Structure probing data (2A3 and DMS) for a 177-nucleotide construct. Values cover nucleotides 27 to 126. For 2A3 the reverse transcriptase was SuperScript II with manganese. The DMS profile rests on 6,336 reads. The reactions ran in a buffer of 150 mM KOAc, 10 mM MgCl2 and 150 mM bicine (pH 8.5), at 24 C. Source: RMDB library RFMREP, as collected in RNAgym.

RNA sequence: GGGAACGACUCGAGUAGAGUCGAAAAGGAGUGGGUGCAAUAAAUGUCCCGUCUUGAAACACGGAUCAAGGAGGCCGUUUUAUGUGCGAGUGUAAGAGUAAUUAAAACUCCGACGCGUAUUGAAAGACUUUAACUGAUUGUUCGCAAUCAGUUAAAGAAAAGAAACAACAACAACAAC
Reactivity to 2A3 in 0.01 (KOAc 150mM, MgCl2 10mM, bicine 150mM(pH8.5), 24C), signal-to-noise 4, nucleotides 027 to 126: g060g030a070g060u070g010g040g020u050g010c030a060a080u080a130a110a040u130g020u010c010c000c000g040u010c020u010u060g040a060a060a000c090a020c060g050g020a050u050c050a080a040g050g010a030g080g000c000c000g010u030u020u050u030a110u060g050u010g000c010g010a030g070u060g000u040a060a030g010a010g030u050a050a110u150u130a070a100a040a030c000u010c000c020g010a030c040g010c010g000u020a080u040u100g070a100a070a020g030a020
Reactivity to DMS in 0.01 (KOAc 150mM, MgCl2 10mM, bicine 150mM(pH8.5), 24C), signal-to-noise 5, nucleotides 027 to 126: g010g010a060g040u000g010g000g010u010g000c060a080a140u000a050a080a090u000g010u000c040c000c020g010u010c030u000u010g010a080a080a140c160a080c130g000g010a080u000c040a040a080g000g010a080g000g010c110c040g000u000u000u000u000a060u000g010u000g010c030g000a070g020u000g000u010a100a080g000a050g010u000a020a110u010u010a050a090a080a040c010u000c000c050g010a090c100g010c040g020u000a030u000u000g010a120a080a110g000a160